[RMDB]
RNA sequence: GGGAACGACUCGAGUAGAGUCGAAAAAUAAUAGAAGCAACUGUGCAGGUCAAAUGAGAAACUCCAGACAAGUAUUGAGGCAUAAAUCAAUGUAGUUUGAGCUGUGAAGAAACACUUCUGGAAGGAGGCGUAUAAACGUAUUCGUACGUUUAUACGCAAAAGAAACAACAACAACAAC
Reactivity to DMS in 0.01 (KOAc 150mM, MgCl2 10mM, bicine 150mM(pH8.5), 24C), signal-to-noise 3, nucleotides 027 to 126: a070u020a070a140u000a050g000a110a080g040c070a080a150c070u000g030u000g020c030a020g020g000u010c040a060a070a020u000g010a160g000a100a090a060c030u000c030c000a070g000a130c210a080a020g000u000a030u000u010g000a090g010g010c080a050u010a030a060a100u000c040a010a020u000g000u020a090g000u010u000u010g000a030g020c110u000g030u000g000a090a050g000a130a060a070c160a080c020u000u010c020u000g010g020a100a060g010g000a090g000
Reactivity to 2A3 in 0.01 (KOAc 150mM, MgCl2 10mM, bicine 150mM(pH8.5), 24C), signal-to-noise 2, nucleotides 027 to 126: a030u090a000a030u050a030g020a100a020g020c030a010a090c050u060g040u170g030c000a020g020g060u030c030a010a020a070u120g010a070g080a090a110a020c030u060c030c010a040g030a190c050a060a030g030u040a050u020u040g000a020g030g080c110a090u150a150a110a040u030c010a030a000u040g030u090a140g020u030u000u050g010a010g050c000u020g020u040g030a050a020g040a010a080a010c040a000c030u060u020c000u030g000g000a030a010g090g070a020g080